Conditions: 150 mM KOAc, 10 mM MgCl2 and 150 mM bicine (pH 8.5), 24 C. The record gives the reactivity of an RNA of 177 nucleotides to 2A3 and DMS. As a SHAPE reagent, 2A3 marks flexible, mostly unpaired nucleotides at the ribose 2'-OH.
RNA sequence: GGGAACGACUCGAGUAGAGUCGAAAAGAUAUGGAACAGCUUUUGACGGAGACCAGUCGGAAACGACUGCGUCUCCGAUAAGCUGAUUCCUAAGUCAAAGCAAAAUUAUCUUCGGAUAAUUUUGCAACGUUAUUAAUUGCUUCGGCAAUUAAUAACGAAAAGAAACAACAACAACAAC
Reactivity to 2A3 in 0.01 (KOAc 150mM, MgCl2 10mM, bicine 150mM(pH8.5), 24C), signal-to-noise 3, nucleotides 027 to 126: g000a010u060a040u130g000g000a000a000c000a010g030c040u140u070u180u280g300a170c120g010g010a000g010a010c000c000a000g010u000c000g000g000a060a060a040c010g000a000c010u000g010c000g010u000c010u010c010c000g000a000u010a000a000g000c000u010g010a040u000u030c000c000u010a090a010g080u010c050a160a070a000g000c000a000a000a010a000u000u020a010u000c030u070u150c300g060g010a000u000a010a000u000u000u010u020g000c000a000a000
Reactivity to DMS in 0.01 (KOAc 150mM, MgCl2 10mM, bicine 150mM(pH8.5), 24C), signal-to-noise 4, nucleotides 027 to 126: g000a040u000a300u010g010g000a010a020c000a010g000c010u000u000u000u010g020a230c140g000g000a030g000a010c010c010a010g010u000c000g020g000a110a080a150c010g010a020c010u010g000c210g000u000c000u000c000c000g000a000u000a000a000g010c000u000g000a130u000u010c010c000u010a020a120g000u000c040a110a120a120g000c000a010a030a000a010u000u000a000u000c000u000u020c190g020g010a010u000a010a010u000u000u000u000g010c000a050a040